An RNA of 177 nucleotides, treated with DMS and 2A3 and read out base by base. For DMS the reverse transcriptase was MarathonRT.
RNA sequence: GGGAACGACUCGAGUAGAGUCGAAAAUGCGCCCGCGCAAAAGUUAGUGAUUGUGUGGUUUAUCAAUUUGACAGAGUGAUGGGCAAUGAAGAAGCUUCCGGCGAACAACCGCUAUUGAAGCGAGAAAGGGUAAAAUUAUCUUCGGAUAAUUUUACCCAAAAGAAACAACAACAACAAC
Reactivity to DMS in 0.01 (KOAc 150mM, MgCl2 10mM, bicine 150mM(pH8.5), 24C), signal-to-noise 2, nucleotides 027 to 126: u020g050c190g000c030c010c000g000c000g000c010a040a100a150a110g000u000u000a010g000u020g000a000u000u010g020u020g030u010g020g040u020u020u040a070u010c000a020a080u000u020u010g030a010c010a040g010a300g000u010g000a100u000g000g020g000c030a150a140u000g000a120a090g020a080a110g000c000u010u000c000c200g000g000c000g000a120a090c250a020a100c250c000g010c080u000a070u050u020g000a000a000g000c000g000a110g000a090a120a160
Reactivity to 2A3 in 0.01 (KOAc 150mM, MgCl2 10mM, bicine 150mM(pH8.5), 24C), signal-to-noise 3, nucleotides 027 to 126: u130g050c030g050c000c020c020g000c000g000c010a260a260a000a000g000u070u050a030g010u030g220a030u020u080g040u000g020u160g130g170u130u230u140a110u220c010a040a020u020u030u120g000a000c000a000g050a000g040u030g110a300u080g000g000g000c000a010a020u150g030a090a060g000a050a010g030c000u060u000c010c020g000g000c000g080a000a000c040a080a150c060c000g010c000u000a010u150u160g030a010a000g000c090g020a010g120a070a110a000

For 2A3, 937 sequencing reads were counted. For 2A3 the reverse transcriptase was SuperScript II with manganese. Reactivities are rounded to 0.1 and cut off at 0 and 3.